[RMDB]
RNA sequence: GGGAACGACUCGAGUAGAGUCGAAAAUCCUUUCUCGAUAGAGAUUGGAGUCAUACAACCCCAGAAACCAUUCCUUAUACGUUGAGUAUUGCUGAAUUCAGUUUAGCGUGCAUGCUCUUGGCUAUUCAUACCAAGGACAACUUCGGUUGUCCUUGAACCCGAUCAUUCUGUUCGCAGAAUGAUCGGGAAAAGAAACAACAACAACAAC
Reactivity to 2A3 in 0.01 (KOAc 150mM, MgCl2 10mM, bicine 150mM(pH8.5), 24C), signal-to-noise 1, nucleotides 027 to 156: u000c000c000u000u000u000c000u010c000g180a240u100a300g000a000g000a000u000u000g020g010a010g020u130c030a040u030a240c040a050a070c020c000c000c010a090g040a100a130a060c010c020a060u000u150c040c000u170u210a050u100a300c110g140u100u210g010a000g010u000a060u110u100g000c000u060g030a130a090u150u200c040a030g140u020u000u010a040g000c020g000u000g050c050a050u030g020c000u000c000u040u100g010g000c020u110a100u090u120c110a020u120a290c130c000a010a000g010g020a000c000a000a000c010u130u040c090g030g020u000u000g030u000c030c000u000u000g000a000a000

This 207-nucleotide RNA was probed chemically with 2A3.